Overview: Chemical mapping of a 177-nucleotide RNA with 2A3 and DMS.
[RMDB]
RNA sequence: GGGAACGACUCGAGUAGAGUCGAAAAACCUCAGUCUUCGGACUGAGGUGAGCGGAGCAUGGUGGCCGUGGGAACUCCUCCUUGGUGACAACGGCCCACGGGGUGCGGCACGCUUCGGCGUGCCGAACAAUAGCAAAGACUUCGGUCUUUGCUAUUGAAAAGAAACAACAACAACAAC
Reactivity to 2A3 in 0.01 (KOAc 150mM, MgCl2 10mM, bicine 150mM(pH8.5), 24C), signal-to-noise 3, nucleotides 027 to 126: a000c000c000u000c000a010g000u010c010u030u140c210g180g000a000c000u000g000a000g000g010u010g000a030g020c050g030g040a050g030c080a130u150g080g050u110g080g040c000c000g010u000g010g040g020a060a060c040u020c030c000u040c020c030u080u130g060g040u060g040a040c020a050a020c080g020g000c000c010c010a000c000g010g000g000g000u090g020c000g000g000c010a000c000g010c010u030u050c180g040g000c020g000u010g000c000c010g000a000a000
Reactivity to DMS in 0.01 (KOAc 150mM, MgCl2 10mM, bicine 150mM(pH8.5), 24C), signal-to-noise 7, nucleotides 027 to 126: a030c000c000u000c000a000g000u000c000u000u010c190g020g010a010c000u000g010a010g000g010u000g000a050g010c120g010g000a080g020c110a080u010g010g030u000g010g010c020c010g010u000g000g010g000a130a120c070u000c050c030u000c050c040u000u010g010g010u010g010a180c050a060a040c060g010g010c020c010c020a030c050g010g000g000g030u010g010c010g000g000c000a010c000g010c000u000u010c130g020g030c000g020u000g010c000c000g000a020a060
Record summary: In probing experiments dimethyl sulfate is read out at A N1 and C N3, which are open when not base-paired. Values cover nucleotides 27 to 126. The reactions ran in a buffer of 150 mM KOAc, 10 mM MgCl2 and 150 mM bicine (pH 8.5), at 24 C.